[RMDB]
RNA sequence: GGGAACGACUCGAGUAGAGUCGAAAAGAUAUGGAAUGUGAUACGCUAUAGGGAGCGAAGAACUCGGAAACGAGGGAGCUCCUAUAGCGUCACAUUCCUAAGUCGAGCCCAACCUUCGGGUUGGGAAGUAAUUCGAGAGGUUCGCCUCUCGAAUUACAAAAGAAACAACAACAACAAC
Reactivity to DMS in 0.01 (KOAc 150mM, MgCl2 10mM, bicine 150mM(pH8.5), 24C), signal-to-noise 2, nucleotides 027 to 126: g000a020u000a300u020g000g010a000a010u010g030u000g000a170u010a030c030g010c010u000a000u000a000g030g020g020a000g020c000g010a080a130g000a100a190c000u010c000g000g000a120a090a190c010g010a020g000g000g010a090g000c010u000c000c020u010a000u000a000g000c010g000u000c000a000c000a000u000u000c000c000u010a000a050g000u000c010g000a180g040c000c000c000a000a000c000c000u000u000c150g040g000g000u000u000g000g000g000a000a030
Reactivity to 2A3 in 0.01 (KOAc 150mM, MgCl2 10mM, bicine 150mM(pH8.5), 24C), signal-to-noise 1, nucleotides 027 to 126: g000a010u070a020u100g010g000a020a010u000g000u010g010a070u050a210c020g000c000u020a000u020a050g240g200g000a070g040c010g160a280a060g030a110a020c000u000c000g000g030a060a130a060c010g000a000g030g040g000a010g000c010u030c000c000u010a000u000a000g000c000g000u000c010a010c000a010u000u030c000c000u010a020a000g020u000c010g010a010g000c000c030c000a020a000c010c010u100u090c300g140g000g000u000u010g000g000g010a030a000

This 177-nucleotide RNA was probed chemically with DMS and 2A3.
It was measured as part of the RMDB library TTRDEL.
The RNA was probed in 150 mM KOAc, 10 mM MgCl2 and 150 mM bicine (pH 8.5) at 24 C.
Values cover nucleotides 27 to 126.